[RMDB]
RNA sequence: GGGAACGACUCGAGUAGAGUCGAAAAAGUCUUGCCCAGAUCUAAGCGGGGGUAGAAAGCUGGACUCUACCUCUUGAUGGGAGGAGCAGCAGUGUCAUGUGGACACACGGCGUGGACACAAGGCAUGUCCGUACAAGGGUUUCGACCCUUGUACGGAAAAAGAAACAACAACAACAAC
Reactivity to DMS in 0.01 (KOAc 150mM, MgCl2 10mM, bicine 150mM(pH8.5), 24C), signal-to-noise 2, nucleotides 027 to 126: a060g000u020c040u000u000g040c010c020c000a200g010a170u000c140u000a050a120g020c080g030g010g000g000g020u000a040g020a050a150a100g000c040u010g000g000a130c130u000c000u010a050c000c010u010c030u000u010g000a100u000g020g000g000a180g030g000a030g010c010a050g020c060a160g020u000g030u000c010a110u020g010u000g030g020a060c000a030c000a120c160g010g000c220g020u000g010g000a070c020a020c020a070a030g000g000c000a010u000g010

An RNA of 177 nucleotides, treated with DMS and read out base by base.
It was measured as part of the RMDB library OK2TRN.